[RMDB]
The record gives the reactivity of an RNA of 207 nucleotides to DMS and 2A3. The reactions ran in a buffer of 150 mM KOAc, 10 mM MgCl2 and 150 mM bicine (pH 8.5), at 24 C. For 2A3 the reverse transcriptase was SuperScript II with manganese. For DMS, 9,736 sequencing reads were counted. Source: RMDB library M2RFPK, as collected in RNAgym.
RNA sequence: GGGAACGACUCGAGUAGAGUCGAAAAUCAAGCAAAUCCAUAAUUGCCAAUGAUGAGCAAUUCGCUAUUGCCGCCUAAAAACGGUUAGCCGGGGCUGCUAGAGCCUUGUUACCAAAGAUAGCCGGCGUUACGGCAUGAUGGUUCGCCAUCAUGCCAACAUUAUCCACUUGUUCGCAAGUGGAUAAUGAAAAGAAACAACAACAACAAC
Reactivity to DMS in 0.01 (KOAc 150mM, MgCl2 10mM, bicine 150mM(pH8.5), 24C), signal-to-noise 4, nucleotides 027 to 156: u010c060a110a140g020c050a070a090a180u000c060c070a110u010a090a050u000u000g010c010c000a100a160u010g020a190u010g000a140g030c010a050a040u000u000c080g010c010u000a080u010u000g000c000c000g010c020c030u020a070a070a120a110a070c040g020g010u000u000a040g020c030c050g040g000g020g030c040u010g000c050u010a110g000a100g010c030c010u010u000g020u010u010a160c100c060a070a070a100g010a130u000a040g020c010c100g020g010c040g030u010u000a060c100g030g020c000a000u000g000a020u000g000g030u000u010c300g030c030c000a000u000c010a010u010g020c000c010a020a040
Reactivity to 2A3 in 0.01 (KOAc 150mM, MgCl2 10mM, bicine 150mM(pH8.5), 24C), signal-to-noise 8, nucleotides 027 to 156: u060c000a020a030g040c030a060a040a120u110c060c030a060u110a160a060u110u010g020c010c010a130a120u210g090a150u090g020a090g020c020a020a040u100u070c050g020c070u060a050u080u180g000c000c000g010c000c010u070a070a030a010a020a020c020g010g010u060u050a010g010c040c020g010g000g000g010c020u050g030c060u140a070g040a010g200c000c000u000u030g040u040u050a030c020c020a070a040a020g070a040u040a020g040c020c020g040g010c010g050u080u120a050c080g000g000c000a000u000g000a000u000g000g040u030u060c180g040c060c000a000u000c000a000u000g000c000c000a000a000